[RMDB]
RNA sequence: GGGAACGACUCGAGUAGAGUCGAAAAAGGCAGUUCGCAAUGUGUGCUCAAACAUUGCUUAUUCAAACACGCUUCACAAUGUGCGACAAAGAAACAUUGUUAUAAGAGCUAAUGUUUUAACAUUGGCAAAACCGAGUUAGCUUCGGCUAACUCGGAAGUCAAUACAUUGCUUCGGCAAUGUAUUGACAAAAGAAACAACAACAACAAC
Reactivity to DMS in 0.01 (KOAc 150mM, MgCl2 10mM, bicine 150mM(pH8.5), 24C), signal-to-noise 2, nucleotides 027 to 156: a130g000g010c100a090g000u000u000c140g000c020a050a070u040g030u000g000u000g030c100u020c060a110a110a030c040a050u000u000g000c020u010u000a110u000u000c100a200a120a050c070a060c050g010c010u000u000c050a150c050a010a030u000g020u000g000c030g040a220c030a120a100a120g000a160a030a050c020a030u010u020g000u010u010a090u030a150a180g030a220g000c010u000a020a020u010g030u000u010u000u000a100a100c040a010u000u000g000g010c000a030a030a090a100c030c010g010a030g020u000u010a000g000c000u000u000c300g040g000c000u000a000a010c000u010c000g000g000a010a030
Reactivity to 2A3 in 0.01 (KOAc 150mM, MgCl2 10mM, bicine 150mM(pH8.5), 24C), signal-to-noise 6, nucleotides 027 to 156: a000g150g010c050a020g030u070u100c030g010c010a010a000u010g030u020g040u070g060c060u140c250a060a040a010c010a010u010u010g000c000u050u080a160u120u120c090a020a090a050c050a010c070g000c000u000u000c010a000c000a000a000u000g000u000g000c010g060a070c170a080a140a020g070a020a040a000c000a000u010u010g020u050u050a150u040a090a090g070a010g010c000u000a000a010u010g040u020u150u040u180a120a020c010a000u000u010g000g000c000a050a000a000a060c000c000g000a000g000u000u000a000g000c010u040u040c250g060g000c000u000a000a000c000u010c000g000g000a000a000